[RMDB]
RNA sequence: GGGAACGACUCGAGUAGAGUCGAAAAGGGAUUACUGCGGAUUUCGGGGUUUUUAACCCCACCUUUUCCGGCGCCUAGAGUGAACUGGUCUCGGAACUUAACCCUAAGUAUACACUGGUCACAUCCCUUACUAAGUCGAAUUCGUUCGACUUAGUAAAAAAGAAACAACAACAACAAC
Reactivity to DMS in 0.01 (KOAc 150mM, MgCl2 10mM, bicine 150mM(pH8.5), 24C), signal-to-noise 7, nucleotides 027 to 126: g000g000g000a120u020u010a050c080u010g000c100g000g010a090u020u020u020c190g020g000g000g010u000u000u050u010u050a020a030c020c000c000c000a020c120c040u000u010u000u000c010c010g010g000c290g000c020c020u000a070g000a230g010u010g010a080a080c050u000g000g010u000c060u000c080g000g010a040a060c210u020u020a060a100c110c100c090u000a070a040g010u000a080u010a090c130a070c020u000g000g010u010c080a050c060a120u010c010c010c010
Reactivity to 2A3 in 0.01 (KOAc 150mM, MgCl2 10mM, bicine 150mM(pH8.5), 24C), signal-to-noise 9, nucleotides 027 to 126: g040g000g010a060u100u100a120c050u110g050c030g040g030a060u040u070u180c090g010g000g000g010u020u020u020u050u230a070a050c000c000c000c000a010c000c000u020u050u030u000c010c010g030g010c030g000c010c010u070a060g020a040g130u090g040a110a070c030u020g010g030u030c040u040c090g030g040a060a040c030u050u070a110a110c020c000c030u030a060a010g030u020a040u030a060c060a010c030u030g020g000u030c010a010c000a070u010c000c000c000